The record gives the reactivity of an RNA of 170 nucleotides to DMS and 2A3. The reactions ran in a buffer of 150 mM KOAc, 10 mM MgCl2 and 150 mM bicine (pH 8.5), at 24 C. For DMS the reverse transcriptase was MarathonRT.
RNA sequence: GGGAACGACUCGAGUAGAGUCGAAAAACCGCGAGGAGGUGGAGAUGCCAUGCCGACCCGAAGAGGAAGAAGAGGACAUGGACGCGAACCGUGAGUGGAACCCUCGAUCCUUUAUUGGGGGGUACACGAACUGUGGGUUUCGACCCACAGAAAAGAAACAACAACAACAAC
Reactivity to DMS in 0.01 (KOAc 150mM, MgCl2 10mM, bicine 150mM(pH8.5), 24C), signal-to-noise 9, nucleotides 027 to 129: a080c020c020g050c050g020a060g000g000a030g020g030u040g010g000a030g000a070u020g030c050c060a020u000g030c050c010g030a040c040c040c030g010a090a050g020a070g040g020a030a010g000a070a020g000a030g000g020a030c070a060u020g000g030a050c070g010c080g030a080a040c040c020g000u000g010a140g000u000g000g020a140a180c000c010c000u000c000g000a020u000c260c120u060u060u080a060u020u010g000g010g000g010g000g010u020a060c040a030c030g010a080a110
Reactivity to 2A3 in 0.01 (KOAc 150mM, MgCl2 10mM, bicine 150mM(pH8.5), 24C), signal-to-noise 9, nucleotides 027 to 129: a010c000c000g010c030g020a040g030g010a010g000g000u080g030g010a070g010a060u150g070c030c020a060u120g020c010c030g050a060c010c020c020g060a080a040g020a020g020g000a000a010g010a020a010g020a020g000g000a010c030a040u080g020g010a020c020g010c030g030a010a020c020c000g040u050g060a020g010u020g000g040a080a040c020c000c000u010c000g030a060u120c020c120u210u260u220a070u100u060g000g000g000g000g010g010u040a020c020a000c020g040a090a020
It was measured as part of the RMDB library 15KLIB. Reactivities are given for positions 27 through 129.